[RMDB]
Structure probing data (DMS and 2A3) for a 177-nucleotide construct. The reactions ran in a buffer of 150 mM KOAc, 10 mM MgCl2 and 150 mM bicine (pH 8.5), at 24 C. The data come from the RNA Mapping Database (RMDB), library M2PK50. Values cover nucleotides 27 to 126. For DMS, 9,776 sequencing reads were counted. DMS adducts were read by reverse transcription with MarathonRT. For 2A3 the reverse transcriptase was SuperScript II with manganese. For 2A3, 22,062 sequencing reads were counted.

RNA sequence: GGGAACGACUCGAGUAGAGUCGAAAAGGUCGGUGUUUCGACACCGACCACUUACCGAGUAUGUUCCUCGGUAUAUAAAACAAACCCUUGGAAACAAGGGAAUACGAAUCGUGUUCGCACGAUUCAACUUACCUCAUCUAUUCGUAGAUGAGGUAAGAAAAGAAACAACAACAACAAC
Reactivity to DMS in 0.01 (KOAc 150mM, MgCl2 10mM, bicine 150mM(pH8.5), 24C), signal-to-noise 6, nucleotides 027 to 126: g020g010u000c000g030g020u000g020u000u000u010c170g020a050c000a000c000c000g020a010c000c000a010c030u000u000a020c000c010g010a030g010u000a080u020g010u000u010c050c000u000c110g020g000u000a020u010a060u010a050a060a060a090c180a090a080a160c010c000c000u000u010g000g000a170a100a200c010a000a010g000g000g010a060a020u010a100c160g010a010a010u000c000g010u000g000u000u010c200g020c010a010c010g000a010u000u000c010a050a130
Reactivity to 2A3 in 0.01 (KOAc 150mM, MgCl2 10mM, bicine 150mM(pH8.5), 24C), signal-to-noise 8, nucleotides 027 to 126: g010g000u000c010g000g000u020g020u010u100u120c200g030a020c000a000c000c000g000a000c000c000a000c000u000u010a010c000c000g000a000g010u100a140u290g060u060u040c000c000u000c010g000g060u040a060u010a030u040a210a090a010a020c090a040a100a110c000c000c000u010u010g020g010a050a040a020c000a000a000g000g000g040a010a010u050a020c040g000a000a000u000c000g000u010g040u050u070c240g020c050a000c010g000a000u010u000c000a000a000